RNA sequence: GGGAACGACUCGAGUAGAGUCGAAAACAUAUGACGGAGAGUGGAACACUCAGCGGAAACGCAUCCAAUGUCUGAAGUCUUUAAUGGGUAUAACAGUCAGUUGACCCUGAUCCCAACAGACAAUAAACGUGCUUAACGUAUUCGUACGUUAAGCACGAAAAGAAACAACAACAACAAC
Reactivity to DMS in 0.01 (KOAc 150mM, MgCl2 10mM, bicine 150mM(pH8.5), 24C), signal-to-noise 3, nucleotides 027 to 126: c070a070u020a100u000g010a100c070g020g050a110g020a070g040u000g000g040a140a200c040a030c020u000c040a160g040c070g000g000a050a080a080c050g020c030a300u000c010c040a060a110u010g010u000c000u000g000a170a050g000u000c030u000u000u000a120a110u000g010g010g010u000a060u000a000a000c040a170g000u010c160a130g000u000u000g000a030c000c010c020u000g000a090u000c000c000c000a030a080c020a030g000a000c000a050a080u000a030a040a160
Reactivity to 2A3 in 0.01 (KOAc 150mM, MgCl2 10mM, bicine 150mM(pH8.5), 24C), signal-to-noise 3, nucleotides 027 to 126: c020a020u150a080u230g080a040c060g040g020a020g000a020g110u030g050g220a120a020c030a020c050u020c030a020g020c000g020g030a090a000a000c010g000c010a010u000c040c020a050a110u070g000u000c000u000g060a030a020g000u000c010u000u070u020a100a070u060g020g000g030u070a150u030a300a030c010a010g280u210c030a030g020u090u020g020a010c000c000c000u020g010a020u030c010c010c020a010a020c020a010g030a000c000a050a040u170a060a060a030
The record gives the reactivity of an RNA of 177 nucleotides to DMS and 2A3. Values are in units of 0.01, from 0 to 300, in steps of 10. The RNA was probed in 150 mM KOAc, 10 mM MgCl2 and 150 mM bicine (pH 8.5) at 24 C. For 2A3 the reverse transcriptase was SuperScript II with manganese.